[RMDB]
RNA sequence: GGGAACGACUCGAGUAGAGUCGAAAAGAAAUAGGCCGUCUCCUUUUUGGAGGAACUGUGUUUUUUUCACUGUGAAAGAAGCGGACUAAGAAUACGCUCACUGUCCGUGAGUGAACGGCGAAAGAAACCCAUCUUAAUAGUUCGCUAUUAAGAUGGGAAAAGAAACAACAACAACAAC
Reactivity to DMS in 0.01 (KOAc 150mM, MgCl2 10mM, bicine 150mM(pH8.5), 24C), signal-to-noise 8, nucleotides 027 to 126: g010a080a100a070u020a090g000g000c000c010g000u010c010u000c000c010u000u020u020u040u030g010g000a040g010g010a050a100c070u000g010u010g000u000u000u000u000u000u000u000c000a160c140u020g020u030g020a080a040a050g000a070a140g000c020g010g010a050c080u010a060a080g010a100a100u040a090c070g000c030u000c030a030c040u020g000u020c180c060g000u000g000a040g010u000g000a070a030c010g000g000c010g010a050a060a070g000a080a090a090
Reactivity to 2A3 in 0.01 (KOAc 150mM, MgCl2 10mM, bicine 150mM(pH8.5), 24C), signal-to-noise 9, nucleotides 027 to 126: g080a010a090a020u190a070g090g000c000c010g020u020c000u030c010c000u070u190u090u230u300g050g010a030g010g030a020a010c030u040g030u010g080u110u010u010u000u010u050u060c050a060c090u120g040u070g210a070a030a050g060a060a000g020c010g010g030a020c040u080a070a030g050a080a050u170a110c070g010c040u040c020a040c030u080g060u110c060c030g010u010g010a010g020u040g020a020a000c010g010g000c040g040a040a070a030g060a010a050a010
This 177-nucleotide RNA was probed chemically with DMS and 2A3. The 2A3 profile rests on 17,396 reads. Reactivities are given for positions 27 through 126. Conditions: 150 mM KOAc, 10 mM MgCl2 and 150 mM bicine (pH 8.5), 24 C. For DMS, 33,868 sequencing reads were counted. For 2A3 the reverse transcriptase was SuperScript II with manganese.